[RMDB]
RNA sequence: GGGAACGACUCGAGUAGAGUCGAAAACAGGGCCCUUAUGUUGAAUGGCCCAGGUCCACUUGUAUGGUUCUGUACCAAGGUUAACCCCAUCCCAUAAUGCCUGGGACAGUUGAUGCAGGACAAUCAGCUUCUGUGCCAUUCAACCUCAGGACUGAGAUCCCAUAUUACGCUUCGGCGUAAUAUGGGAAAAAGAAACAACAACAACAAC
Reactivity to 2A3 in 0.01 (KOAc 150mM, MgCl2 10mM, bicine 150mM(pH8.5), 24C), signal-to-noise 2, nucleotides 027 to 156: c010a020g030g050g130c050c020c010u000u040a060u040g000u000u030g000a030a000u000g010g010c030c150c020a010g020g010u090c080c080a100c080u110u120g030u050a080u120g120g000u010u000c010u000g010u020a070c020c020a060a090g070g000u120u160a110a090c020c010c020c020a010u030c000c000c000a030u110a220a070u220g070c030c060u000g000g000g020a000c020a080g100u080u060g010a020u010g000c000a010g000g030a020c000a010a110u090c050a080g060c010u160u050c000u040g000u000g000c010c000a000u000u000c000a000a000c000c000u000c030a020g000g000a010c010u020g010a020g010a160
Chemical mapping of a 207-nucleotide RNA with 2A3.
Source: RMDB library OK3TST, as collected in RNAgym.
As a SHAPE reagent, 2A3 marks flexible, mostly unpaired nucleotides at the ribose 2'-OH.
The RNA was probed in 150 mM KOAc, 10 mM MgCl2 and 150 mM bicine (pH 8.5) at 24 C.
Values cover nucleotides 27 to 156.